[RMDB]
RNA sequence: GGGAACGACUCGAGUAGAGUCGAAAAAUAGUUGGCCAGUUUGCCGUCAUUAUUCAGGCGUUCGACGUCUUUAUCGUUGAUUUUCGACACAUAGCCGAUGACGUGGGUCAACGCCGAACCGUAAGGAGUUUUAUUCGGUGUUCGCACCGAAUAAAACAAAAGAAACAACAACAACAAC
Reactivity to 2A3 in 0.01 (KOAc 150mM, MgCl2 10mM, bicine 150mM(pH8.5), 24C), signal-to-noise 2, nucleotides 027 to 126: a000u100a000g010u010u020g000g000c000c050a080g060u080u160u270g090c050c000g000u000c000a000u020u140a050u220u230c120a040g050g000c000g040u040u070c000g060a040c000g030u020c000u050u190u070a240u160c090g090u030u060g030a030u080u040u090u130c090g070a040c030a020c010a220u200a080g020c020c000g000a000u010g000a000c020g000u090g000g100g070u000c010a000a010c000g000c020c000g050a090a060c000c000g050u070a050a060g090g020a140
Reactivity to DMS in 0.01 (KOAc 150mM, MgCl2 10mM, bicine 150mM(pH8.5), 24C), signal-to-noise 4, nucleotides 027 to 126: a080u010a090g020u000u000g000g000c000c030a210g020u010u010u020g040c140c000g020u000c030a010u010u010a120u010u010c230a080g020g010c020g000u010u000c060g010a040c300g030u000c090u000u000u000a050u020c090g010u000u000g000a060u000u000u000u010c080g000a070c180a040c140a060u010a130g020c040c040g010a010u010g010a010c010g010u010g010g010g010u000c020a020a030c010g010c060c060g020a060a150c030c050g020u010a060a130g010g020a200

Chemical mapping of a 177-nucleotide RNA with 2A3 and DMS. Reactivities are given for positions 27 through 126. Source: RMDB library OK2TRN, as collected in RNAgym. The reactions ran in a buffer of 150 mM KOAc, 10 mM MgCl2 and 150 mM bicine (pH 8.5), at 24 C. For DMS the reverse transcriptase was MarathonRT. For 2A3 the reverse transcriptase was SuperScript II with manganese.